[RMDB]
RNA sequence: GGGAACGACUCGAGUAGAGUCGAAAAGAGAGAAAUACCGCGAGAAAACCCAGAAAGGACGGACCGGACGCGGAAGCAGGUGCGUCACCGGUCGCAAGAAAGAGCUUAACAAGACGCACAGAGAGAGGCGAUAGUACUCAUUCGUGAGUACUAUCGCAAAAGAAACAACAACAACAAC
Reactivity to 2A3 in 0.01 (KOAc 150mM, MgCl2 10mM, bicine 150mM(pH8.5), 24C), signal-to-noise 2, nucleotides 027 to 126: g120a000g010a010g040a000a040a070u170a010c010c020g000c040g000a020g030a030a040a020a020c020c000c000a020g140a060a080a020g170g000a010c060g040g040a010c000c000g000g070a000c050g000c070g010g040a010a020g040c120a050g130g000u010g010c040g000u010c000a010c000c050g000g000u030c010g010c150a070a060g140a070a070a000g040a030g030c010u140u060a070a000c030a130a000g010a000c000g000c000a010c060a010g000a000g000a000g000a000g140
Reactivity to DMS in 0.01 (KOAc 150mM, MgCl2 10mM, bicine 150mM(pH8.5), 24C), signal-to-noise 1, nucleotides 027 to 126: g000a070g030a290g000a050a060a120u000a090c170c000g010c000g000a210g000a060a010a090a090c030c000c000a230g010a060a060a040g010g000a080c140g000g030a010c000c000g060g000a200c050g060c000g030g010a090a090g030c090a160g030g010u000g000c000g000u010c000a060c040c050g020g000u000c030g000c020a020a100g010a130a110a100g010a060g000c000u000u000a050a130c260a150a050g030a000c080g000c030a020c050a230g010a160g000a070g000a170g090
Record summary:
An RNA of 177 nucleotides, treated with 2A3 and DMS and read out base by base. Conditions: 150 mM KOAc, 10 mM MgCl2 and 150 mM bicine (pH 8.5), 24 C.